[RMDB]
RNA sequence: GGGAACGACUCGAGUAGAGUCGAAAACGCCAGGUGGGCGGCCGCGCGGGCCACGGCGUCCACGUUUCGGCAUCGCAGUGCCACGGCGGCGGGUCCCACGACCGCCUCGAACAGGAGGCGGUUGAGGAGUUCAGUUUAGCUUCGGCUAAACUGAACUAAAAGAAACAACAACAACAAC
Reactivity to DMS in 0.01 (KOAc 150mM, MgCl2 10mM, bicine 150mM(pH8.5), 24C), signal-to-noise 1, nucleotides 027 to 126: c000g000c020c000a110g000g030u000g040g000g000c020g040g000c000c000g020c000g030c050g000g000g000c140c050a160c010g000g010c060g000u000c000c000a110c210g020u010u020u020c080g000g000c300a110u000c040g000c090a150g000u040g000c020c000a080c000g000g020c020g010g000c010g000g000g000u040c000c000c000a280c000g000a000c000c000g020c000c000u000c030g020a100a200c260a220g040g000a000g000g000c010g000g020u000u000g000a100g000g000
Reactivity to 2A3 in 0.01 (KOAc 150mM, MgCl2 10mM, bicine 150mM(pH8.5), 24C), signal-to-noise 2, nucleotides 027 to 126: c040g020c050c040a040g000g150u010g030g010g030c080g110g000c000c010g000c030g000c000g050g010g010c090c010a050c040g030g010c050g000u060c000c000a050c030g010u020u100u300c080g020g000c000a010u180c070g070c050a070g000u070g060c010c010a070c030g010g000c030g010g020c050g030g030g000u110c000c030c000a010c020g000a000c000c000g070c040c010u020c020g110a260a120c030a130g260g000a000g000g020c000g000g000u000u000g000a010g020g010

Chemical mapping of a 177-nucleotide RNA with DMS and 2A3. The RNA was probed in 150 mM KOAc, 10 mM MgCl2 and 150 mM bicine (pH 8.5) at 24 C. The data come from the RNA Mapping Database (RMDB), library OK1LIB. Values cover nucleotides 27 to 126. For 2A3 the reverse transcriptase was SuperScript II with manganese.